[RMDB]
RNA sequence: GGGAACGACUCGAGUAGAGUCGAAAAUGCUUAUCUGUGCUGUCCUCCACGAGUCUCCGGCUGCACUCCAACCCUGAGCCCAAGACCUUCACGUUUGAUCAUGUUGCAGAUGUGGAUACCACUCAGGCAUGUUGCCAAGAUUCGUCUUGGCAACAUGAAAAGAAACAACAACAACAAC
Reactivity to 2A3 in 0.01 (KOAc 150mM, MgCl2 10mM, bicine 150mM(pH8.5), 24C), signal-to-noise 3, nucleotides 027 to 126: u070g020c020u070u120a080u140c050u060g110u090g060c030u040g030u060c010c010u030c020c020a060c040g010a020g040u030c030u000c020c010g040g000c020u030g000c030a050c080u000c020c010a040a070c000c000c000u020g010a020g020c000c000c000a020a020g020a090c000c000u020u050c010a040c040g020u020u040u000g060a080u080c100a170u200g110u190u220g060c030a020g020a040u010g030u020g030g010a010u050a100c020c040a040c010u030c000a000g050g010
Reactivity to DMS in 0.01 (KOAc 150mM, MgCl2 10mM, bicine 150mM(pH8.5), 24C), signal-to-noise 5, nucleotides 027 to 126: u010g000c050u010u010a090u000c070u020g010u000g010c040u000g020u000c040c030u000c040c050a090c110g010a110g000u000c020u010c030c040g000g000c040u000g000c070a080c060u000c040c050a060a120c100c010c010u000g020a090g020c060c050c040a070a100g000a080c110c070u000u000c020a040c060g000u000u000u000g000a090u010c080a090u010g010u010u000g010c020a030g000a040u000g020u010g000g010a060u010a100c090c070a110c040u000c050a060g010g000